[RMDB]
RNA sequence: GGGAACGACUCGAGUAGAGUCGAAAAUGGCCCAGCUACGCAUCGGUUACGCCACCGUGGUUUGGGUGACCAGCGCCUAUCUGCUGGCCUACGCGGUGCCAAUGCUGGUGGCCGGCCGGCUUGGCGACGGACCAGUGUAAUUCGUUACACUGGUCCGAAAAGAAACAACAACAACAAC
Reactivity to DMS in 0.01 (KOAc 150mM, MgCl2 10mM, bicine 150mM(pH8.5), 24C), signal-to-noise 5, nucleotides 027 to 126: u010g020g010c020c010c010a060g010c020u010a080c130g000c050a070u010c100g010g010u000u010a090c200g010c050c020a060c120c030g010u010g010g000u000u010u010g010g020g030u010g010a090c020c010a040g010c020g010c130c090u000a090u020c110u000g010c010u000g000g000c010c020u000a060c120g020c040g010g000u010g000c040c040a030a080u020g020c040u000g020g020u000g000g010c030c050g000g000c020c030g010g020c060u000u000g000g000c010g010a210
Reactivity to 2A3 in 0.01 (KOAc 150mM, MgCl2 10mM, bicine 150mM(pH8.5), 24C), signal-to-noise 5, nucleotides 027 to 126: u090g130g000c000c000c020a010g000c010u050a010c040g020c020a120u130c060g040g020u060u100a070c150g040c030c000a020c010c030g070u070g040g060u150u180u120g080g000g000u050g040a040c000c010a010g020c010g030c020c050u230a240u220c060u120g000c020u020g020g000c010c000u060a060c060g070c040g080g040u080g040c010c010a090a070u210g020c030u050g010g040u030g010g080c030c020g020g000c000c020g020g000c030u010u050g010g000c020g030a030
An RNA of 177 nucleotides, treated with DMS and 2A3 and read out base by base. For DMS the reverse transcriptase was MarathonRT. It was measured as part of the RMDB library OK2TRN. Conditions: 150 mM KOAc, 10 mM MgCl2 and 150 mM bicine (pH 8.5), 24 C. The 2A3 profile rests on 9,658 reads.